Source: RMDB library OK2TST, as collected in RNAgym. Chemical mapping of a 177-nucleotide RNA with DMS and 2A3. DMS adducts were read by reverse transcription with MarathonRT. Values cover nucleotides 27 to 126.
RNA sequence: GGGAACGACUCGAGUAGAGUCGAAAACAAUCGAGCAAAUAGUAGUACAAUCAAACCACGCAGCUUAUGAAAGCGGCUUGGCUUUCGAGAAUAACAGUACUGAGACUAGUUCUCUUAUCGUUAUUUCCACGGACAAAGGAUUCGUCCUUUGUCCGUGAAAAGAAACAACAACAACAAC
Reactivity to DMS in 0.01 (KOAc 150mM, MgCl2 10mM, bicine 150mM(pH8.5), 24C), signal-to-noise 2, nucleotides 027 to 126: c090a160a090u000c120g000a060g020c080a080a080a110u020a040g020u000a050g000u020a060c080a080a110u000c080a040a050a050c000c020a040c070g000c050a040g000c010u020u010a120u030g000a090a080a020g020c000g000g030c020u000u010g020g000c070u000u000u000c130g000a050g000a060a070u010a010a060c110a090g020u000a010c140u000g000a100g010a040c020u000a080g000u010u000c000u000c000u000u010a020u010c080g020u000u000a120u010u000u000c020
Reactivity to 2A3 in 0.01 (KOAc 150mM, MgCl2 10mM, bicine 150mM(pH8.5), 24C), signal-to-noise 2, nucleotides 027 to 126: c040a010a140u160c070g040a030g090c050a000a090a050u050a070g090u030a010g020u040a040c040a030a090u040c060a050a080a010c010c000a000c050g000c000a010g040c000u120u080a100u300g230a230a070a010g000c000g020g020c000u010u030g030g000c030u070u080u050c100g040a060g050a070a040u070a060a020c010a020g010u020a020c030u070g010a000g020a070c040u090a030g120u210u010c040u000c000u030u100a170u120c050g010u000u040a030u040u060u020c030